The record gives the reactivity of an RNA of 177 nucleotides to 2A3 and DMS. 2A3 adducts were read by reverse transcription with SuperScript II with manganese. It was measured as part of the RMDB library RFM100. Conditions: 150 mM KOAc, 10 mM MgCl2 and 150 mM bicine (pH 8.5), 24 C. The 2A3 profile rests on 650 reads.
RNA sequence: GGGAACGACUCGAGUAGAGUCGAAAAGAGUGGUAGAAGAGCGUUGCAUGCGCGUCGAAGGGCGAUGGCGACUGACCCUGGAGCACAUGCAAGUGAGUAUGCAGACAUGAGUAACGUUAAGCCGGGUCUCCUAUCCCGGCUUCGGCCGGGAUAGGAGAAAAGAAACAACAACAACAAC
Reactivity to 2A3 in 0.01 (KOAc 150mM, MgCl2 10mM, bicine 150mM(pH8.5), 24C), signal-to-noise 1, nucleotides 027 to 126: g040a000g050u170g030g060u050a030g050a200a000g050a060g000c050g050u010u030g000c010a000u010g000c100g000c040g160u300c030g050a050a000g000g010g000c010g020a000u110g080g030c030g070a090c000u010g040a050c000c010c000u000g010g010a000g020c010a010c000a030u000g000c020a000a040g010u010g000a030g030u030a030u040g010c000a000g010a130c020a060u080g040a040g060u030a050a030c010g020u060u110a030a030g000c000c000g110g000g000u000
Reactivity to DMS in 0.01 (KOAc 150mM, MgCl2 10mM, bicine 150mM(pH8.5), 24C), signal-to-noise 1, nucleotides 027 to 126: g000a130g060u000g000g000u000a030g000a040a020g010a090g000c100g010u020u000g000c000a010u000g000c150g090c030g080u010c130g000a150a090g010g000g000c000g000a100u000g010g000c250g060a090c000u000g000a300c300c000c000u000g020g050a160g000c010a010c000a000u000g000c000a000a000g000u010g000a060g000u000a000u000g000c140a030g060a050c010a000u030g000a020g000u060a060a040c050g000u000u040a050a130g000c000c010g010g000g000u010